Notes:
An RNA of 177 nucleotides, treated with 2A3 and DMS and read out base by base. The data come from the RNA Mapping Database (RMDB), library OK2TST. For 2A3 the reverse transcriptase was SuperScript II with manganese. In probing experiments dimethyl sulfate is read out at A N1 and C N3, which are open when not base-paired. For DMS, 97,869 sequencing reads were counted. Values cover nucleotides 27 to 126.
[RMDB]
RNA sequence: GGGAACGACUCGAGUAGAGUCGAAAAGUAUUGAUCAGGUUCAUCCCGCCGAGUGCGGUUUCGAUGACCUGGUUGACCAUCUGAGCCGACAUGCCGUACCGCGAUGCGGCUUCGCGAUCAACGGUGACAUUAUGAAAAUAUUCGUAUUUUCAUAAUGAAAAGAAACAACAACAACAAC
Reactivity to 2A3 in 0.01 (KOAc 150mM, MgCl2 10mM, bicine 150mM(pH8.5), 24C), signal-to-noise 9, nucleotides 027 to 126: g050u040a060u100u120g010a010u010c010a000g040g000u270u130c000a000u000c000c010c000g000c010c020g220a130g040u300g010c010g040g000u060u150u270c070g010a000u000g000a000c000c000u000g000g000u000u010g000a010c020c000a040u040c040u090g040a040g060c020c010g060a100c050a080u180g010c010c000g020u020a030c020c060g050c050g090a090u060g030c050g000g020c000u010u010c010g000c010g010a040u050c040a060a060c030g020g020u050g030a020
Reactivity to DMS in 0.01 (KOAc 150mM, MgCl2 10mM, bicine 150mM(pH8.5), 24C), signal-to-noise 9, nucleotides 027 to 126: g010u010a120u000u000g010a010u000c010a010g000g010u010u010c010a020u000c010c010c010g010c010c020g010a160g020u010g020c010g010g000u000u010u010c220g010a010u000g010a030c010c000u000g000g010u000u000g000a050c100c070a140u000c070u000g010a130g010c030c020g010a110c260a090u010g000c010c010g010u000a080c080c060g010c070g010a060u000g010c080g000g000c080u000u000c010g010c040g000a040u000c100a070a060c040g000g010u000g010a230